An RNA of 207 nucleotides, treated with DMS and 2A3 and read out base by base. For 2A3, 6,265 sequencing reads were counted. For DMS the reverse transcriptase was MarathonRT. Conditions: 150 mM KOAc, 10 mM MgCl2 and 150 mM bicine (pH 8.5), 24 C. Source: RMDB library M2RFPK, as collected in RNAgym. The DMS profile rests on 6,056 reads.
RNA sequence: GGGAACGACUCGAGUAGAGUCGAAAAAUCUCAGCUAGGGAGAGUAUAACAUUCAUGUUGACGAGACCUAGACGAAACACAGAGGAAAAUUAUUAAUCACUGGAUAGUAUUAGUAAUGACUCUGUGUAAAACUCUUCUACGUUCGCGUAGAAGAGAAGUAACAUAUUACGUUCGCGUAAUAUGUUACAAAAGAAACAACAACAACAAC
Reactivity to DMS in 0.01 (KOAc 150mM, MgCl2 10mM, bicine 150mM(pH8.5), 24C), signal-to-noise 3, nucleotides 027 to 156: a100u000c010u010c010a150g050c020u000a020g000g000g000a220g000a200g020u000a070u000a010a030c030a060u000u000c160a110u000g020u000u010g000a170c030g010a270g010a050c000c020u000a060g000a300c080g020a150a140a030c020a020c000a010g010a020g010g010a090a070a090a060u000u000a010u010u010a010a010u000c130a090c030u000g020g010a150u020a100g010u000a050u000u000a010g010u000a010a010u000g010a180c000u000c010u000g010u000g000u000a000a020a050a100c000u000c000u000u000c010u000a000c000g020u000u010c300g040c020g050u000a010g000a000a010g000a000g010a010a070
Reactivity to 2A3 in 0.01 (KOAc 150mM, MgCl2 10mM, bicine 150mM(pH8.5), 24C), signal-to-noise 7, nucleotides 027 to 156: a000u000c010u000c000a010g000c000u010a000g000g030g000a090g010a040g090u070a140u070a230a050c070a040u130u280c100a080u290g000u010u030g040a020c040g010a010g080a080c000c000u000a010g020a060c030g020a000a050a000c000a000c000a000g010a010g020g050a070a160a130a010u000u000a000u000u010a000a000u020c050a010c050u060g100g080a150u300a300g010u010a000u000u000a000g000u000a000a000u010g010a020c000u000c000u000g000u000g000u010a000a000a000a000c000u000c000u000u000c000u000a000c000g020u000u040c210g000c000g060u000a000g000a000a000g000a000g000a010a010